[RMDB]
RNA sequence: GGGAACGACUCGAGUAGAGUCGAAAAGUAAUAGAUAACUGGAUGCAGCGUAGGCGGCAACGCAUAUCCAGUACGAAUGGUACCUGUAAAUAAAAUAUGUCGCCUAGUACAAGUACCAACAGAAGGAUAAGCGAUGGUGAUGUCAAUCACAUUUGCAUCAGUGAUUAGCUUUCGAGCUAAUCACUGAAAAAGAAACAACAACAACAAC
Reactivity to DMS in 0.01 (KOAc 150mM, MgCl2 10mM, bicine 150mM(pH8.5), 24C), signal-to-noise 2, nucleotides 027 to 156: g020u020a090a090u000a090g010a190u000a090a090c010u000g000g020a040u010g000c150a070g030c000g050u010a040g000g020c000g000g010c000a120a030c000g000c020a080u020a120u000c010c000a050g000u000a120c150g000a130a080u000g020g030u000a040c020c000u010g050u000a030a100a130u000a100a040a050a160u000a130u000g000u000c000g020c010c000u020a090g040u000a050c020a010a030g010u000a010c010c010a060a260c060a080g020a060a080g020g020a110u000a110a170g010c000g010a040u010g050g020u010g020a050u010g030u000c170a080a120u000c010a020c070a050u010u000u020g020c040a250
Reactivity to 2A3 in 0.01 (KOAc 150mM, MgCl2 10mM, bicine 150mM(pH8.5), 24C), signal-to-noise 4, nucleotides 027 to 156: g020u020a020a190u060a080g160a080u090a120a070c000u000g010g000a030u050g070c280a190g000c230g000u000a020g000g000c000g010g000c000a000a000c010g000c030a010u020a000u130c000c010a000g010u000a010c010g080a110a110u060g010g000u020a020c000c000u020g010u030a020a070a140u150a010a120a120a030u100a030u000g010u000c000g000c000c000u000a020g000u000a010c000a020a000g010u000a010c000c000a000a010c080a060g150a180a020g060g030a040u030a130a080g000c020g040a020u090g080g100u040g010a020u030g080u200c090a060a040u060c000a040c000a060u060u090u270g010c010a040
An RNA of 207 nucleotides, treated with DMS and 2A3 and read out base by base. 2A3 is a SHAPE reagent: it acylates the 2'-hydroxyl of flexible nucleotides of all four kinds. It was measured as part of the RMDB library OK3TST. DMS adducts were read by reverse transcription with MarathonRT.